[RMDB]
Chemical mapping of a 177-nucleotide RNA with DMS and 2A3.
For 2A3, 2,468 sequencing reads were counted.
For DMS the reverse transcriptase was MarathonRT.
The reactions ran in a buffer of 150 mM KOAc, 10 mM MgCl2 and 150 mM bicine (pH 8.5), at 24 C.
RNA sequence: GGGAACGACUCGAGUAGAGUCGAAAACCUCCCGCGGCCAGCUGCUUCUUCUUGUUCUCCAGGGCCUUCCUUCUUCUGUGGUCCCGCCUCUCCCGGUCGGUGAACCCUCUGGGCUUGGGUCUCCUCCGAAGUGUAGUAUGUUCGCAUACUACACUUCAAAAGAAACAACAACAACAAC
Reactivity to DMS in 0.01 (KOAc 150mM, MgCl2 10mM, bicine 150mM(pH8.5), 24C), signal-to-noise 3, nucleotides 027 to 126: c060c050u000c040c020c010g020c110g020g020c030c030a080g010c060u000g010c040u000u000c030u000u000c030u010u010g000u000u000c020u000c020c080a130g010g000g010c050c040u010u000c030c030u000u000c030u000u000c060u010g020u010g010g010u000c030c010c020g010c040c030u010c070u000c020c020c040g000g020u010c050g020g010u000g010a100a110c050c020c020u000c060u010g010g010g010c070u000u000g000g010g010u000c030u000c010c030u010c110c120
Reactivity to 2A3 in 0.01 (KOAc 150mM, MgCl2 10mM, bicine 150mM(pH8.5), 24C), signal-to-noise 1, nucleotides 027 to 126: c000c000u010c020c010c000g030c030g010g020c000c000a000g040c030u040g030c000u060u050c010u060u010c010u080u130g040u080u050c020u010c050c020a030g050g030g000c000c000u040u050c000c000u010u070c000u060u050c040u070g130u070g080g010u050c010c030c020g010c000c000u030c020u020c000c000c000g000g040u060c020g060g000u070g040a070a050c000c010c010u000c010u020g050g020g000c000u000u040g030g000g000u010c010u020c010c000u020c020c050